[RMDB]
RNA sequence: GGGAACGACUCGAGUAGAGUCGAAAAAUUCGCCGAGAAGCCUCUGUUCGAAAUCUUCGGGAGUGAUCCAGAUGACGGUCCUGCCAUGAGACCGCAACGAGAGCAUGUCGCAUCGAAUGGACUCGGGUAUACUAGGUGACGUUCGCGUCACCUAGAACUGUUGGUUACAGUUCGCUGUAACCAACAGAAAAGAAACAACAACAACAAC
Reactivity to 2A3 in 0.01 (KOAc 150mM, MgCl2 10mM, bicine 150mM(pH8.5), 24C), signal-to-noise 2, nucleotides 027 to 156: a010u060u050c040g000c000c000g010a000g040a090a050g090c010c020u010c070u050g020u040u010c020g020a060a080a170u050c070u100u090c100g060g050g010a040g050u080g000a030u030c040c020a050g050a270u110g060a100c000g010g010u000c000c020u100g160c020c020a150u080g010a030g000a130c000c000g020c030a030a030c040g060a010g010a000g100c030a040u220g120u140c030g010c120a040u030c030g020a010a010u040g030g010a000c000u000c000g020g000g030u040a060u040a140c000u000a000g000g020u000g000a010c010g000u000u060c190g070c000g060u030c000a000c000c000u000a000g000a010a000
Reactivity to DMS in 0.01 (KOAc 150mM, MgCl2 10mM, bicine 150mM(pH8.5), 24C), signal-to-noise 1, nucleotides 027 to 156: a160u060u010c080g030c020c010g050a070g000a130a110g010c080c010u000c060u000g010u000u000c030g000a040a110a150u010c010u000u020c020g050g010g000a160g070u040g000a140u000c000c030a060g010a110u000g020a100c050g010g000u000c030c010u000g000c060c260a090u020g030a020g000a020c000c010g000c000a040a110c000g020a120g040a060g040c100a090u000g010u000c060g000c080a220u000c030g000a090a160u000g010g000a090c040u010c000g020g000g030u000a050u000a120c000u000a000g000g030u000g030a020c000g060u010u030c300g030c030g000u000c000a000c010c000u000a000g000a080a100
Description: Structure probing data (2A3 and DMS) for a 207-nucleotide construct. It was measured as part of the RMDB library M2RFPK. The DMS profile rests on 1,624 reads.